Structure probing data (DMS and 2A3) for a 177-nucleotide construct. Values are in units of 0.01, from 0 to 300, in steps of 10. 2A3 adducts were read by reverse transcription with SuperScript II with manganese. Source: RMDB library M2PK50, as collected in RNAgym.
RNA sequence: GGGAACGACUCGAGUAGAGUCGAAAACUCUGACGCUUCGGCGUCAGAGAAACCUCUAACCAGAUUGGCGAGGACGACGCUGCGGAGCGCGUUUGCCAACAAAAACGCAUAGAUUCGUCUAUGCGAACCCAAAAUGACUGUUCGCAGUCAUUUUGGGAAAAGAAACAACAACAACAAC
Reactivity to DMS in 0.01 (KOAc 150mM, MgCl2 10mM, bicine 150mM(pH8.5), 24C), signal-to-noise 1, nucleotides 027 to 126: c010u000c000u000g000a010c000g010c000u010u010c240g020g010c010g010u010c000a010g010a000g020a050a040a070c010c000u000c050u000a170a160c080c090a090g000a160u000u010g000g010c010g000a110g030g000a150c010g000a100c000g020c000u000g000c290g000g000a090g010c010g010c010g020u000u000u000g000c010c010a030a000c170a010a070a120a030a130c010g000c000a000u010a000g000a040u000u010c160g000u020c000u000a000u010g000c000g010a010a050
Reactivity to 2A3 in 0.01 (KOAc 150mM, MgCl2 10mM, bicine 150mM(pH8.5), 24C), signal-to-noise 2, nucleotides 027 to 126: c000u000c000u000g010a000c000g010c010u030u060c250g120g000c000g040u000c000a000g000a000g000a010a010a000c020c020u030c030u080a060a050c020c000a080g110a300u050u120g060g000c010g020a080g030g030a050c020g040a070c010g000c030u130g030c050g150g220a010g000c170g000c020g020u030u030u080g090c000c000a020a030c020a010a090a010a000a000c000g000c010a000u000a030g030a020u030u050c190g040u000c140u000a000u000g000c000g010a030a040